RNA sequence: GGGAACGACUCGAGUAGAGUCGAAAAGUGGGAAGAUGACAAAUGGGAUAGGGUCAACUUACAAGCCAGUUACGCGCACAACGACAAAAGUUACGCGGAGCCUUACAUGGUGAUUCCCGCCAAUAAAAACUGAUAGGAUAUUCGUAUCCUAUCAGUUAAAAGAAACAACAACAACAAC
Reactivity to DMS in 0.01 (KOAc 150mM, MgCl2 10mM, bicine 150mM(pH8.5), 24C), signal-to-noise 9, nucleotides 027 to 126: g020u010g000g000g000a050a080g010a090u010g010a110c110a090a070a090u020g000g000g000a180u020a070g000g020g010u010c090a030a060c090u010u010a060c120a070a130g010c040c060a060g010u010u010a060c050g010c040g010c180a060c120a030a040c060g010a110c160a080a060a070a080g010u010u010a090c060g010c010g010g000a120g010c030c050u000u010a090c130a100u010g000g010u000g000a110u000u000c000c000c000g000c040c050a090a080u040a030a070a060
Reactivity to 2A3 in 0.01 (KOAc 150mM, MgCl2 10mM, bicine 150mM(pH8.5), 24C), signal-to-noise 9, nucleotides 027 to 126: g080u070g010g030g020a060a040g050a130u120g020a040c070a060a180a110u120g030g000g030a060u120a120g060g010g010u020c010a030a030c050u040u100a060c040a110a040g040c020c020a020g010u040u070a040c020g010c000g010c030a040c050a180a060c040g140a010c060a040a140a010a030g020u040u040a030c020g000c010g020g010a020g010c010c010u080u070a090c060a130u130g000g000u020g040a140u000u010c000c000c000g000c010c010a050a040u220a100a090a010